Chemical mapping of a 177-nucleotide RNA with DMS.
Conditions: 150 mM KOAc, 10 mM MgCl2 and 150 mM bicine (pH 8.5), 24 C.
The DMS profile rests on 919 reads.

RNA sequence: GGGAACGACUCGAGUAGAGUCGAAAAGAUAUGGAGUAAAGGUACUAUCGCUUUGAUCUAAAAUCAAUGAAAUUUCGGAAACGAAAUUUCAUUGAUUUUAGGGAGCGACGUACUUUACUCCUAAGUCGUAACUGAUAGUCUUCGGACUAUCAGUUACAAAAGAAACAACAACAACAAC
Reactivity to DMS in 0.01 (KOAc 150mM, MgCl2 10mM, bicine 150mM(pH8.5), 24C), signal-to-noise 1, nucleotides 027 to 126: g020a160u000a300u030g030g000a080g020u000a010a010a030g000g000u050a010c030u000a300u000c010g010c000u000u010u020g010a120u030c010u000a010a020a000a000u000c000a000a000u010g020a000a010a010u000u000u010c000g020g010a070a070a140c000g030a010a030a000u000u000u000c010a000u010u000g010a010u000u000u000u000a010g000g000g000a010g010c000g020a010c300g010u000a050c000u000u000u000a000c000u010c000c000u030a030a110g010u000c120